[RMDB]
RNA sequence: GGGAACGACUCGAGUAGAGUCGAAAAACUAAGAAAUUGGAGGAACUAUAAAUGGAUCUAACAAGAGAAGAGUUUUUAGAACGUUAUUGGAAUACGGUAAAAAGAAUUUGCACAUACUAUAAUGUACGUAUGUUAGCUACUUCGGUAGCUAACAUACAAAAGAAACAACAACAACAAC
Reactivity to DMS in 0.01 (KOAc 150mM, MgCl2 10mM, bicine 150mM(pH8.5), 24C), signal-to-noise 2, nucleotides 027 to 126: a050c030u000a060a040g030a120a240a140u000u000g010g010a300g000g000a010a080c030u010a260u010a060a110a100u000g010g000a050u010c000u000a020a220c030a020a030g010a030g020a210a170g010a040g000u000u030u000u030u000a120g020a090a060c060g030u010u000a090u000u010g000g010a130a090u000a030c140g010g040u020a080a050a070a060a100g000a080a110u000u000u000g000c050a050c050a040u000a050c070u000a060u010a020a030u000g000u000a060c150
Reactivity to 2A3 in 0.01 (KOAc 150mM, MgCl2 10mM, bicine 150mM(pH8.5), 24C), signal-to-noise 1, nucleotides 027 to 126: a010c030u040a060a030g050a020a080a070u080u100g030g000a020g050g000a010a030c020u020a100u130a300a170a100u190g010g010a030u030c010u080a000a040c000a050a050g010a010g040a110a040g030a000g000u050u000u000u060u060a120g010a040a000c020g000u030u020a110u020u100g010g080a110a020u130a070c050g020g000u090a060a040a000a030a020g210a020a100u000u040u070g040c040a050c000a100u050a040c000u140a040u050a220a030u120g030u010a050c080

An RNA of 177 nucleotides, treated with DMS and 2A3 and read out base by base. For DMS the reverse transcriptase was MarathonRT. For 2A3 the reverse transcriptase was SuperScript II with manganese. It was measured as part of the RMDB library OK2TRN. Values cover nucleotides 27 to 126. High DMS reactivity at an A or C suggests that its Watson-Crick edge is free.